[RMDB]
RNA sequence: GGGAACGACUCGAGUAGAGUCGAAAAAGAGUAUCUCGAUCAACACUCUCAUUGAGUUUGAAUGUCAGUGACAUUGGUUCUUAUGACUUUCCAACUAUUGCUGCAUGGACACUAGGAGAAACUAUAGCACGCGAAAUGGAUUCGUCCAUUUCGCGUGAAAAGAAACAACAACAACAAC
Reactivity to 2A3 in 0.01 (KOAc 150mM, MgCl2 10mM, bicine 150mM(pH8.5), 24C), signal-to-noise 3, nucleotides 027 to 126: a000g150a000g020u060a050u050c100u010c020g100a100u050c020a070a030c020a010c040u000c010u010c020a100u020u140g030a050g020u000u000u090g050a030a020u030g020u010c010a010g030u000g050a020c050a080u070u250g080g070u290u050c010u060u270a110u110g030a010c000u010u000u020c010c010a000a010c010u050a040u020u180g070c010u010g000c020a050u030g000g000a000c000a000c000u050a080g040g030a020g090a060a080a020c020u040a050u070a200g070
Reactivity to DMS in 0.01 (KOAc 150mM, MgCl2 10mM, bicine 150mM(pH8.5), 24C), signal-to-noise 1, nucleotides 027 to 126: a050g000a120g020u010a080u010c090u000c000g000a100u030c030a050a050c150a000c000u020c000u000c050a120u010u000g000a030g000u000u030u060g030a010a090u020g000u020c010a000g010u040g000a000c070a210u010u000g000g000u000u000c030u000u000a050u100g000a000c120u000u000u000c000c040a020a030c150u000a050u040u030g030c020u000g000c020a080u010g010g000a150c050a040c050u020a070g000g000a020g000a050a050a020c000u020a170u020a060g000